An RNA of 177 nucleotides, treated with 2A3 and DMS and read out base by base. The reactions ran in a buffer of 150 mM KOAc, 10 mM MgCl2 and 150 mM bicine (pH 8.5), at 24 C.

RNA sequence: GGGAACGACUCGAGUAGAGUCGAAAAGUUCUGCUUUCAUUGGAUUUCAGAUCAAGAGGUAAUGAUUAAUGGAAGCAAUUUGGGGGAAUUAGUAUUACGACGCUAGAGCUGAAAUUCUUGGACCGUCAAGUACUUUGCUAUUCGUAGCAAAGUACUUAAAAGAAACAACAACAACAAC
Reactivity to 2A3 in 0.01 (KOAc 150mM, MgCl2 10mM, bicine 150mM(pH8.5), 24C), signal-to-noise 8, nucleotides 027 to 126: g040u060u050c050u050g030c000u020u000u010c010a040u030u040g100g020a040u040u070u070c020a050g070a150u080c070a130a090g050a060g170g100u110a120a050u080g130a020u020u090a020a000u010g050g030a030a010g030c050a030a090u120u110u060g020g010g000g000g030a030a060u060u010a050g050u020a050u070u070a060c110g030a010c020g020c050u040a020g000a010g040c030u070g040a040a020a020u020u000c000u010u010g040g040a050c040c010g030u050c020
Reactivity to DMS in 0.01 (KOAc 150mM, MgCl2 10mM, bicine 150mM(pH8.5), 24C), signal-to-noise 6, nucleotides 027 to 126: g020u010u030c080u010g010c010u010u010u010c010a040u000u010g010g010a050u000u010u020c050a050g000a080u030c090a130a080g010a130g020g010u010a040a060u010g010a050u010u010a010a010u010g000g010a080a070g010c040a050a060u000u020u020g010g000g000g010g020a120a050u000u000a060g000u000a090u010u020a060c060g010a070c140g020c050u000a040g020a030g010c040u010g000a040a040a080u000u010c020u000u000g010g010a130c070c030g010u010c130